[RMDB]
RNA sequence: GGGAACGACUCGAGUAGAGUCGAAAAGAUAUGGACUAGAUUAAUGAACUACAUCCACUUUCGGAAACGAAAGGGAUGCAAAGCUUAUUAGUCCUAAGUCAAAGUUCGUAACUUCGGUUACGAACAAGGAUUUCACUGAGUUCGCUCAGUGAAAUCCAAAAGAAACAACAACAACAAC
Reactivity to 2A3 in 0.01 (KOAc 150mM, MgCl2 10mM, bicine 150mM(pH8.5), 24C), signal-to-noise 2, nucleotides 027 to 126: g010a030u170a080u190g070g030a000c010u040a000g070a270u210u130a090a110u210g010a110a040c030u140a060c180a010u000c030c010a300c200u010u000u000c020g040g040a020a040a030c000g010a010a010a000g000g030g000a000u010g000c050a090a120a010g000c000u050u040a030u030u030a040g000u010c010c020u020a130a020g020u020c020a190a000a080g020u000u020c010g000u000a010a010c020u090u130c300g100g000u000u000a000c000g000a000a000c010a000a010
Reactivity to DMS in 0.01 (KOAc 150mM, MgCl2 10mM, bicine 150mM(pH8.5), 24C), signal-to-noise 1, nucleotides 027 to 126: g010a120u010a160u000g020g000a020c000u000a080g000a050u000u000a010a010u000g000a030a040c080u000a030c010a000u000c000c000a110c000u000u000u000c000g020g030a170a110a160c000g000a020a000a030g000g000g030a000u000g000c070a000a100a060g010c080u000u010a010u000u000a010g030u000c000c070u000a050a040g010u030c010a140a160a110g000u000u000c000g000u000a000a010c000u000u030c210g030g010u000u000a000c010g000a010a010c010a040a030
About this RNA
Chemical mapping of a 177-nucleotide RNA with 2A3 and DMS. It was measured as part of the RMDB library TTRDEL. The reactions ran in a buffer of 150 mM KOAc, 10 mM MgCl2 and 150 mM bicine (pH 8.5), at 24 C.